RNA sequence: GGGAACGACUCGAGUAGAGUCGAAAACGAGAGACGAGAGGGUAACUCGUCCGCCGUAAACCCGAGGUUUCCUGGGCAAGGCUAAUCCUCCCAGGGUCAGUCGGGGGCUAAGGCGAGGCCGGAAGGCGAUACUAUCGUCCUUCGGGACGAUAGUAUCAAAAGAAACAACAACAACAAC
Reactivity to 2A3 in 0.01 (KOAc 150mM, MgCl2 10mM, bicine 150mM(pH8.5), 24C), signal-to-noise 1, nucleotides 027 to 126: c010g020a030g010a030g010a050c000g010a010g010a040g100g240g050u130a060a050c000u000c000g000u000c000c020g020c000c000g070u090a050a040a050c020c000c010g000a040g000g030u070u120u190c010c000u010g000g000g020c130a110a030g030g000c130u130a090a090u190c000c020u110c010c000c010a000g000g020g000u020c010a020g120u010c000g000g000g000g010g000c050u060a050a020g010g000c010g000a040g010g000c010c020g000g060a050a030g040g030c030
Reactivity to DMS in 0.01 (KOAc 150mM, MgCl2 10mM, bicine 150mM(pH8.5), 24C), signal-to-noise 3, nucleotides 027 to 126: c050g020a130g020a140g000a020c000g000a030g010a150g000g000g000u010a080a110c010u000c000g010u000c000c030g000c060c010g000u000a040a120a120c000c000c010g010a020g010g000u000u010u010c010c000u000g010g000g010c120a090a010g000g030c240u010a140a130u020c010c000u010c000c000c000a030g000g000g000u000c060a080g010u000c000g020g000g000g000g000c100u010a060a150g000g010c010g010a100g010g020c010c010g030g020a100a090g000g020c030